RNA sequence: GGGAACGACUCGAGUAGAGUCGAAAACGUCAGACGACGAAGUCGGUCCAUCUGCGGUAACAGACCGACAUAGAGUUCGAAGCAGAACGCACAACCGCAGACACACGAUUGGAGUGUGAAUGAGAGACAUCCCGAUACCUUUCGAGGUAUCGGGAUGAAAAGAAACAACAACAACAAC
Reactivity to DMS in 0.01 (KOAc 150mM, MgCl2 10mM, bicine 150mM(pH8.5), 24C), signal-to-noise 4, nucleotides 027 to 126: c040g000u000c000a060g030a160c240g000a060c000g000a100a090g010u000c010g060g000u020c000c180a110u010c010u000g010c000g000g020u000a130a110c160a160g000a020c010c000g000a030c010a030u060a110g000a140g010u020u000c020g020a120a230g000c140a080g000a040a070c000g030c120a100c190a130a060c000c010g000c000a000g000a150c020a030c000a020c010g000a200u040u040g000g010a210g000u000g000u030g000a160a050u020g030a180g000a090g010a200
Reactivity to 2A3 in 0.01 (KOAc 150mM, MgCl2 10mM, bicine 150mM(pH8.5), 24C), signal-to-noise 4, nucleotides 027 to 126: c000g000u020c050a120g080a300c110g000a010c030g020a120a010g000u010c000g010g000u000c010c030a060u030c010u020g000c000g000g020u000a040a010c000a070g000a020c000c000g010a010c000a010u110a020g150a030g000u010u020c030g020a080a000g130c100a070g020a060a010c060g050c000a020c030a130a030c000c000g000c010a000g030a000c010a000c010a000c000g100a100u120u300g150g050a230g000u030g000u030g000a030a120u210g030a070g000a000g000a010